[RMDB]
The record gives the reactivity of an RNA of 170 nucleotides to DMS and 2A3. Reactivities are rounded to 0.1 and cut off at 0 and 3. The DMS profile rests on 9,744 reads. The reactions ran in a buffer of 150 mM KOAc, 10 mM MgCl2 and 150 mM bicine (pH 8.5), at 24 C. The data come from the RNA Mapping Database (RMDB), library 15KLIB. For DMS the reverse transcriptase was MarathonRT.
RNA sequence: GGGAACGACUCGAGUAGAGUCGAAAAUCUGGUUAUUCACCCACAUUCCAAUGGCGGGUUUGGUACGAAUGUAUAAUUUGUUAGCAUGCCUUUGGCUUUUACGCAAGUUUUAUCAGCAUGUAAUCAAUAAGUGAACACUUCGGUGUUCACAAAAGAAACAACAACAACAAC
Reactivity to DMS in 0.01 (KOAc 150mM, MgCl2 10mM, bicine 150mM(pH8.5), 24C), signal-to-noise 5, nucleotides 027 to 129: u010c080u030g020g020u020u040a070u000u000c180a140c040c020c040a120c160a070u030u030c080c170a050a060u020g040g030c140g000g030g030u030u010u020g050g020u000a000c090g040a050a100u030g020u040a030u030a120a050u020u020u020g020u080u000a100g030c040a060u020g040c000c000u000u010u000g020g020c130u050u010u040u060a060c200g050c170a040a040g000u000u020u070u030a030u030c180a160g040c060a030u040g030u020a040a010u030c150a050a080u040a030a060
Reactivity to 2A3 in 0.01 (KOAc 150mM, MgCl2 10mM, bicine 150mM(pH8.5), 24C), signal-to-noise 4, nucleotides 027 to 129: u030c030u020g070g000u090u040a030u090u070c040a060c030c050c000a050c030a040u110u020c000c000a070a050u060g030g040c120g020g000g000u050u040u080g060g000u040a000c040g060a070a110u060g110u100a120u000a160a080u030u060u030g060u060u010a030g010c010a020u010g000c010c000u050u000u030g080g000c030u010u060u070u100a120c160g020c030a000a000g030u000u020u120u130a130u030c000a000g030c000a000u020g000u010a080a030u100c050a020a060u140a120a030